[RMDB]
RNA sequence: GGGAACGACUCGAGUAGAGUCGAAAAAUGCUCGCUCAAAAGCUGAUGGUACUUCAGCGCCAUCGCCUUCCACUCUUGUUCGAACAACGUGGCAUUGAACCCACGCCAAUGCUUGAUACGCCAACGCGGCUAGUCGAUAUUUCGAUAUCGACUAGCCAAAAGAAACAACAACAACAAC
Reactivity to 2A3 in 0.01 (KOAc 150mM, MgCl2 10mM, bicine 150mM(pH8.5), 24C), signal-to-noise 1, nucleotides 027 to 126: a000u090g000c000u000c000g010c010u040c030a100a080a020a000g010c050u080g030a020u020g000g080u000a060c040u020u160c050a070g000c030g000c070c000a030u040c000g000c010c000u080u030c010c000a040c000u050c000u060u080g030u120u100c010g010a090a020c020a020a050c040g060u030g020g000c030a070u010u050g050a070a080c000c040c020a020c040g010c010c040a040a020u110g000c010u080u080g050a050u080a150c080g050c050c020a050a020c060g000c050
Reactivity to DMS in 0.01 (KOAc 150mM, MgCl2 10mM, bicine 150mM(pH8.5), 24C), signal-to-noise 2, nucleotides 027 to 126: a080u000g010c000u000c030g010c070u050c070a120a060a100a100g020c020u000g010a080u000g010g000u010a110c090u000u000c070a060g020c060g040c110c000a050u000c030g010c090c010u000u030c030c040a050c060u000c030u000u000g000u000u030c040g010a070a110c070a050a090c150g000u000g000g020c050a080u030u010g060a100a110c130c020c000a090c080g010c090c060a020a090u000g000c030u000u000g000a120u000a020c060g000c000c110a050a080c210g020c120